[RMDB]
RNA sequence: GGGAACGACUCGAGUAGAGUCGAAAAUAUUGUGACAUAUGGAAUCCUGAAAGCAUAUGAAAGAAAUUGCAGUAAUUCUCUGUGAAUUAUAUAAGUGUGGAAAGGCAUGAAAGGAGACCAUGUGAGGUGACACAUAGUUGUUCGCAACUAUGUGUCAAAAAGAAACAACAACAACAAC
Reactivity to 2A3 in 0.01 (KOAc 150mM, MgCl2 10mM, bicine 150mM(pH8.5), 24C), signal-to-noise 4, nucleotides 027 to 126: u220a030u040u170g080u070g100a010c000a000u040a000u000g000g030a010a060u050c000c020u080g080a160a080a000g020c030a020u110a050u140g170a100a070a080g120a020a110a130u090u110g000c010a010g000u010a000a070u120u000c080u010c040u110g090u070g110a010a010u040u020a030u000a060u020a180a100g040u040g020u040g090g130a180a120a080g110g000c070a140u050g020a010a150a000g000g000a010g010a010c000c000a000u000g030u020g000a030g080g060
Reactivity to DMS in 0.01 (KOAc 150mM, MgCl2 10mM, bicine 150mM(pH8.5), 24C), signal-to-noise 3, nucleotides 027 to 126: u060a120u010u010g000u000g010a210c020a010u000a060u000g030g000a050a270u000c010c010u020g000a190a070a110g000c010a020u050a020u030g000a060a140a080g010a080a070a090u010u020g000c040a110g000u000a000a030u000u010c020u000c300u030g000u010g020a040a010u000u000a020u000a090u020a070a120g010u000g010u000g000g000a090a080a080g020g010c010a030u000g000a070a060a030g010g000a030g010a300c010c000a000u010g010u000g000a080g000g040

An RNA of 177 nucleotides, treated with 2A3 and DMS and read out base by base. It was measured as part of the RMDB library OK1LIB.